[RMDB]
RNA sequence: GGGAACGACUCGAGUAGAGUCGAAAAAUUGUGUCGACGCCGGUGUUCGACGGCGCCCAGGAGGCCGAGCUGCAGGGCCUGUUGUCGUGCACGCUGCCCAACCGCGACGGUGACGUGCUGGUCGACGCCGAGUAUAUGAAUUCGUUCAUAUACUCGGAAAAGAAACAACAACAACAAC
Reactivity to DMS in 0.01 (KOAc 150mM, MgCl2 10mM, bicine 150mM(pH8.5), 24C), signal-to-noise 9, nucleotides 027 to 126: a080u010u010g010u010g010u000c020g010a060c030g010c060c020g010g010u000g010u000u000c060g010a070c020g010g010c030g010c040c030c050a120g010g000a100g010g010c040c060g000a100g010c050u000g010c060a070g010g010g010c020c110u000g010u000u000g010u000c040g010u000g010c030a030c050g010c040u010g000c030c000c060a110a110c090c090g010c070g010a090c140g000g000u000g000a090c050g010u000g010c020u010g010g010u000c010g000a090c120g010
Reactivity to 2A3 in 0.01 (KOAc 150mM, MgCl2 10mM, bicine 150mM(pH8.5), 24C), signal-to-noise 2, nucleotides 027 to 126: a000u130u120g060u020g030u040c010g020a040c050g020c080c020g100g020u060g020u040u060c010g020a020c000g020g010c020g010c000c010c010a070g060g050a050g030g000c050c060g070a040g030c070u070g010c060a040g000g000g040c000c020u050g090u070u120g000u010c030g010u030g010c020a010c060g020c030u080g000c000c000c010a030a050c040c030g060c070g060a080c050g030g030u040g020a030c030g030u090g030c020u110g060g030u040c020g000a010c000g000